[RMDB]
RNA sequence: GGGAACGACUCGAGUAGAGUCGAAAACCGUGUGCCGGAUUAUGACUGAACGCCUCUAAGUCAGAAUCCAAGCUAGCAACCGGCGCCUGUGCCCGCCGCUCGCCCCGACCCACAUUAGGGCGUUCGCUGCUAAAGGUCGAUUCGUCGACCUUUAGCAAAAAGAAACAACAACAACAAC
Reactivity to 2A3 in 0.01 (KOAc 150mM, MgCl2 10mM, bicine 150mM(pH8.5), 24C), signal-to-noise 3, nucleotides 027 to 126: c000c010g020u060g030u070g010c030c110g000g000a020u010u020a020u090g000a010c030u040g000a080a020c050g050c030c000u050c080u120a070a000g010u000c000a000g030a010a000u000c010c040a010a000g010c040u050a010g020c030a060a040c000c020g010g000c040g020c020c020u040g010u050g050c000c000c000g010c020c020g020c000u010c000g050c000c030c000c000g030a070c010c040c000a050c010a070u140u220a080g000g010g010c000g020u010u030c050g000c050
Reactivity to DMS in 0.01 (KOAc 150mM, MgCl2 10mM, bicine 150mM(pH8.5), 24C), signal-to-noise 2, nucleotides 027 to 126: c020c020g000u010g000u020g000c030c200g000g020a030u010u010a030u010g010a030c020u020g000a110a050c070g030c010c020u040c080u040a090a030g040u000c030a010g010a050a030u010c030c050a070a100g010c040u010a090g010c060a100a130c050c010g000g000c030g000c020c000u040g010u000g000c000c040c020g000c120c040g000c030u010c030g000c020c000c000c030g010a100c050c030c040a070c200a090u010u030a150g010g000g000c060g000u000u000c060g010c160
Description: This 177-nucleotide RNA was probed chemically with 2A3 and DMS. DMS (dimethyl sulfate) methylates the pairing face of unpaired adenines and cytosines. DMS adducts were read by reverse transcription with MarathonRT. Values cover nucleotides 27 to 126. The 2A3 profile rests on 1,795 reads.